An RNA of 177 nucleotides, treated with DMS and 2A3 and read out base by base. For 2A3, 33,011 sequencing reads were counted. The data come from the RNA Mapping Database (RMDB), library OK2TRN. DMS adducts were read by reverse transcription with MarathonRT. The RNA was probed in 150 mM KOAc, 10 mM MgCl2 and 150 mM bicine (pH 8.5) at 24 C. 2A3 adducts were read by reverse transcription with SuperScript II with manganese. Values cover nucleotides 27 to 126.
RNA sequence: GGGAACGACUCGAGUAGAGUCGAAAACAGUGGAACAAUCCCGCGAUCCAGGCGCUGAACCGCGACUUCACGCUGCCAGGUGAGCGGAUUCACGUGGUGUUCCGCAGCGAUGAGUCGGGGACCACGGCUUUCUUAUUAGGUUCGCCUAAUAAGAAAGAAAAGAAACAACAACAACAAC
Reactivity to DMS in 0.01 (KOAc 150mM, MgCl2 10mM, bicine 150mM(pH8.5), 24C), signal-to-noise 9, nucleotides 027 to 126: c080a120g020u010g000g010a080a070c150a110a110u010c110c020c030g020c010g000a180u000c010c010a070g020g020c020g010c010u000g000a030a030c100c080g010c150g020a080c220u000u000c020a020c200g010c010u010g040c000c010a070g000g000u000g000a300g020c010g000g010a070u010u010c080a080c020g010u000g010g000u000g000u010u000c010c010g020c070a090g010c130g010a110u010g000a130g010u000c020g020g000g000g000a060c010c010a020c040g010g000
Reactivity to 2A3 in 0.01 (KOAc 150mM, MgCl2 10mM, bicine 150mM(pH8.5), 24C), signal-to-noise 9, nucleotides 027 to 126: c030a040g090u150g090g090a100a030c040a060a070u110c080c050c010g000c010g000a000u000c000c010a030g020g010c010g000c020u020g000a010a010c040c040g140c100g200a100c040u030u030c020a020c180g020c070u180g020c010c010a020g010g010u020g020a010g000c010g010g000a000u020u030c060a030c070g010u020g000g020u040g120u130u020c000c010g000c020a050g080c040g250a290u220g060a070g080u250c010g000g000g010g010a010c000c000a010c020g030g000